[RMDB]
RNA sequence: GGGAACGACUCGAGUAGAGUCGAAAAUGUUUCCCAGCCAGGGAUUUUCGACCUCAAGUUUCUUGAUCUUCUUCUUUGUCUUCCGGAGCUCCGCCUCGAGUUCCUCCGCUUUCUUUCUUCCACUCACAAACUUUGGUCUUCGGACCAAAGAAAAGAAACAACAACAACAAC
Reactivity to DMS in 0.01 (KOAc 150mM, MgCl2 10mM, bicine 150mM(pH8.5), 24C), signal-to-noise 3, nucleotides 027 to 129: u060g030u000u000u000c050c020c050a160g040c070c030a120g000g000g000a050u000u000u000u000c090g040a100c030c070u030c060a070a100g000u020u060u020c030u060u000g020a040u000c050u070u010c030u030u020c020u010u000u000g030u020c080u020u060c030c010g000g000a060g050c040u040c050c030g040c070c030u040c060g010a060g010u000u030c040c030u020c000c050g030c090u000u000u000c040u000u000u000c030u000u000c030c040a100c070u000c040a130c120a110a080a110
Reactivity to 2A3 in 0.01 (KOAc 150mM, MgCl2 10mM, bicine 150mM(pH8.5), 24C), signal-to-noise 5, nucleotides 027 to 129: u140g020u020u050u010c000c000c010a010g080c070c050a030g010g010g010a010u020u020u020u050c020g020a030c000c000u040c070a050a070g010u030u050u060c000u040u090g080a090u010c030u060u000c000u090u010c000u070u100u090g080u040c010u080u020c030c010g010g010a010g010c020u010c030c020g030c020c000u030c010g000a020g020u020u010c000c010u000c000c010g010c010u020u110u040c000u000u090u000c000u040u010c010c000a040c010u000c020a090c040a060a150a030